[RMDB]
The record gives the reactivity of an RNA of 177 nucleotides to 2A3 and DMS.
For 2A3, 1,946 sequencing reads were counted.
For DMS, 1,951 sequencing reads were counted.
The reactions ran in a buffer of 150 mM KOAc, 10 mM MgCl2 and 150 mM bicine (pH 8.5), at 24 C.
RNA sequence: GGGAACGACUCGAGUAGAGUCGAAAAGAAAGCGCGAACGUCCGGUUGCGGCGAUUGCUAAAGUGCGAGCGAAGCUCGCAGGUUUAUUUAUUGCCGGGCAGCCGAAAGACCGGUGUUGAGCGCGAAAGGGUUUAGAUUAGUUCGCUAAUCUAAACCCAAAAGAAACAACAACAACAAC
Reactivity to 2A3 in 0.01 (KOAc 150mM, MgCl2 10mM, bicine 150mM(pH8.5), 24C), signal-to-noise 3, nucleotides 027 to 126: g130a010a090a000g030c030g010c020g000a020a000c000g070u070c000c000g010g020u010u020g040c010g000g000c010g080a140u100u140g000c040u140a100a110a000g170u130g020c030g000a010g020c130g140a210a050g030c020u000c000g000c020a010g000g000u030u100u010a050u060u250u030a150u220u160g020c030c010g000g020g000c000a010g010c000c000g030a090a070a010g030a010c000c000g000g030u010g000u030u000g040a070g000c000g000c000g020a040a000a010
Reactivity to DMS in 0.01 (KOAc 150mM, MgCl2 10mM, bicine 150mM(pH8.5), 24C), signal-to-noise 1, nucleotides 027 to 126: g000a100a100a190g000c000g000c000g040a110a000c050g040u040c020c050g000g000u020u000g000c010g020g000c000g000a020u020u040g000c090u000a010a060a050g000u000g020c000g000a050g000c040g020a220a110g000c020u000c000g030c000a010g000g020u000u000u000a010u010u050u040a000u020u000g000c000c040g030g000g000c070a060g000c040c050g020a030a090a170g010a050c040c050g030g020u030g000u000u000g000a270g000c020g000c020g030a020a120a100